An RNA of 177 nucleotides, treated with DMS and read out base by base.
[RMDB]
RNA sequence: GGGAACGACUCGAGUAGAGUCGAAAAGGCGCAGCUUGCCAAUUUGCAGGUCGGCAAGCGGCCGGAAGAAAUCGCGGUGCUGGAAGCUGCUGUUCGUUCUGCACGGGCGCAGGCCGAUGAUGCGCAAUCGGAUGGUGGGAUUCGUCCCACCAUCCGAAAAAGAAACAACAACAACAAC
Reactivity to DMS in 0.01 (KOAc 150mM, MgCl2 10mM, bicine 150mM(pH8.5), 24C), signal-to-noise 1, nucleotides 027 to 126: g000g000c030g020c020a100g020c010u000u000g010c040c060a110a100u000u000u010g010c200a030g010g010u000c030g000g020c020a010a000g030c030g010g000c000c000g040g020a120a120g000a040a080a040u010c110g000c030g010g000u000g010c060u000g020g000a160a150g020c060u000g010c020u000g060u000u000c160g030u000u010c060u000g000c070a140c000g000g010g010c050g040c040a120g000g020c000c020g000a120u020g010a140u000g000c000g000c190a100a090